Source information:
Structure probing data (2A3 and DMS) for a 177-nucleotide construct. Source: RMDB library RFM100, as collected in RNAgym. For 2A3 the reverse transcriptase was SuperScript II with manganese. The RNA was probed in 150 mM KOAc, 10 mM MgCl2 and 150 mM bicine (pH 8.5) at 24 C. For DMS the reverse transcriptase was MarathonRT. For DMS, 2,922 sequencing reads were counted.
[RMDB]
RNA sequence: GGGAACGACUCGAGUAGAGUCGAAAACCGAGUAGCGGCGAGCGAAAGGGGACCGAUGGCCAAACCGGCGAGCGGGCGGGCGCCAGCCUAUACCGCCGCCGGGGUUGCAGGGCCUCCCGCCCGGGAGCGUCCCACUAGGAUUCGUCCUAGUGGGACGAAAAGAAACAACAACAACAAC
Reactivity to 2A3 in 0.01 (KOAc 150mM, MgCl2 10mM, bicine 150mM(pH8.5), 24C), signal-to-noise 2, nucleotides 027 to 126: c010c000g000a050g010u050a010g000c030g160g060c150g080a040g010c000g020a030a040a040g010g000g010g010a000c020c010g040a150u160g080g010c000c030a020a030a030c020c020g020g000c020g030a070g000c010g000g020g010c040g010g000g030c000g010c060c020a030g000c000c020u040a050u200a070c000c000g010c010c000g000c000c010g000g000g010g010u040u060g030c060a060g020g060g000c010c000u030c000c000c010g000c000c050c020g010g010g010a020g030
Reactivity to DMS in 0.01 (KOAc 150mM, MgCl2 10mM, bicine 150mM(pH8.5), 24C), signal-to-noise 3, nucleotides 027 to 126: c010c000g010a050g020u030a020g040c020g000g020c100g010a240g030c010g010a060a130a250g000g020g010g020a150c070c020g000a080u000g000g000c040c060a040a080a160c010c000g030g000c000g000a090g060c000g000g000g010c300g010g040g030c030g010c240c300a060g000c000c000u000a130u050a230c000c020g000c000c010g000c000c000g000g000g000g000u060u010g000c090a120g000g000g010c020c020u010c040c040c050g000c210c100c180g010g000g020a090g010